[RMDB]
RNA sequence: GGGAACGACUCGAGUAGAGUCGAAAAUCCAGAGCCAGGACCACCAUCUCCCGCUGAGAUGGGAAAUGAGGACUGCAGCGCCUAUCCUUAUGCUGACUCUCUUCAGGCUAUUCCUGACUCAUCCACCUAGCACUGGGGGAGCACCUGCUGUGCGCCAAAUACUCCGUAGGUUCGCCUACGGAGUAUUAAAAGAAACAACAACAACAAC
Reactivity to 2A3 in 0.01 (KOAc 150mM, MgCl2 10mM, bicine 150mM(pH8.5), 24C), signal-to-noise 3, nucleotides 027 to 156: u020c010c010a000g010a010g020c010c010a010g000g020a030c010c020a020c020c000a070u010c010u030c070c100c100g170c210u300g000a010g000a010u010g020g000g020a020a080a000u140g010a010g000g000a000c020u030g000c020a010g010c020g030c020c040u160a160u210c050c030u190u170a120u200g030c010u020g040a300c000u000c000u010c020u030u040c010a020g010g070c050u060a120u060u080c010c030u050g000a040c030u030c020a040u090c030c020a070c010c060u030a030g010c000a030c140u040g000g000g020g000g010a030g030c050a070c040c010u080g080c020u040g020u040g030c000g000c030c000a050
Reactivity to DMS in 0.01 (KOAc 150mM, MgCl2 10mM, bicine 150mM(pH8.5), 24C), signal-to-noise 1, nucleotides 027 to 156: u000c000c040a130g010a090g000c030c010a050g020g020a140c120c050a150c030c010a020u000c000u000c000c060c250g040c240u000g000a040g010a030u010g000g000g020a010a020a050u010g000a010g040g000a060c040u020g020c030a060g000c020g080c110c070u000a170u000c060c050u000u010a100u010g000c020u000g030a100c010u000c020u000c020u000u000c010a010g030g040c110u000a130u000u000c000c000u000g000a050c010u000c030a090u000c020c010a080c050c030u000a110g020c060a080c050u000g070g000g030g030g000a060g000c050a070c050c020u000g010c010u000g010u000g020c020g060c030c020a100